RNA sequence: GGGAACGACUCGAGUAGAGUCGAAAAUGUUAGUCCUACGUACCUGUAGUUGUAGGUAGUACCUAGGCAGUAAUAGGUAAUAAUGCAACUUGCGGCCUCUGAUUUUAUAGUACGGUGGUACUAGUGAGAUAUUUUACCUCUCUUGUGUCUUGCCUAGUAACGCGUAAUUGUUCGCAAUUACGCGUUAAAAAGAAACAACAACAACAAC
Reactivity to DMS in 0.01 (KOAc 150mM, MgCl2 10mM, bicine 150mM(pH8.5), 24C), signal-to-noise 2, nucleotides 027 to 156: u000g000u000u010a100g000u000c010c010u000a060c050g020u000a050c030c040u000g030u010a050g020u010u000g020u000a050g010g040u000a070g000u000a030c010c010u000a030g000g010c030a270g020u010a160a220u000a030g030g010u000a050a060u010a070a050u000g030c010a050a030c020u000u010g060c020g020g050c070c040u000c070u010g000a140u000u000u000u010a120u010a070g000u000a030c030g010g020u000g050g010u000a020c020u010a050g020u000g010a100g030a070u000a050u010u000u000u000a050c030c010u000c060u000c060u000u000g010u010g010u000c030u010u010g030c020c030u000a090g010
Reactivity to 2A3 in 0.01 (KOAc 150mM, MgCl2 10mM, bicine 150mM(pH8.5), 24C), signal-to-noise 2, nucleotides 027 to 156: u230g000u070u080a070g110u020c010c000u030a030c080g060u050a040c000c020u130g080u230a060g040u060u040g040u010a030g040g060u010a050g030u000a020c000c000u000a010g060g000c040a030g110u150a020a080u040a130g030g030u000a010a070u060a080a000u010g000c000a040a050c020u030u040g060c110g020g020c000c000u020c030u020g110a140u070u040u090u240a170u090a130g080u050a040c050g040g060u050g040g000u010a040c010u000a040g020u010g050a050g000a050u020a050u030u030u040u070a080c000c000u000c020u040c050u030u070g080u000g030u010c000u120u100g060c010c000u010a030g030